RNA sequence: GGGAACGACUCGAGUAGAGUCGAAAAAAUGCAGUUAUUAUGACACUUGAUUUAUUGAAGGACAUUAAAUUUGUUAUACCUGCUCUACAGCAUGCAUUUAUGAAACAUAAGGGCGGUGAUUCAACUGGAUAGAUAGUAGGUUCGCCUACUAUCUAUCAAAAGAAACAACAACAACAAC
Reactivity to DMS in 0.01 (KOAc 150mM, MgCl2 10mM, bicine 150mM(pH8.5), 24C), signal-to-noise 7, nucleotides 027 to 126: a040a030u000g010c010a030g010u000u000a080u000u010a040u010g000a050c050a090c300u000u000g000a040u000u000u000a050u010u010g010a120a050g000g020a110c040a020u000u000a010a040a060u000u000u010g010u000u000a060u000a050c170c040u000g010c020u000c060u000a080c160a070g020c080a050u000g010c060a040u000u010u000a060u020g010a060a060a080c110a040u000a080a060g010g000g010c050g010g010u000g000a110u000u000c080a020a080c140u000g010
Reactivity to 2A3 in 0.01 (KOAc 150mM, MgCl2 10mM, bicine 150mM(pH8.5), 24C), signal-to-noise 5, nucleotides 027 to 126: a000a000u110g000c020a020g040u060u040a100u100u040a040u090g020a010c010a010c070u080u090g040a030u090u080u130a070u060u110g050a110a030g100g060a020c010a030u060u090a020a060a060u060u080u080g030u040u020a050u020a060c010c010u040g000c000u000c020u040a050c040a020g010c020a030u040g000c010a020u060u040u080a110u130g100a090a080a030c040a030u060a080a020g000g030g000c000g000g050u030g030a050u080u070c030a060a040c050u070g050

Structure probing data (DMS and 2A3) for a 177-nucleotide construct. The RNA was probed in 150 mM KOAc, 10 mM MgCl2 and 150 mM bicine (pH 8.5) at 24 C. Source: RMDB library 15KREP, as collected in RNAgym.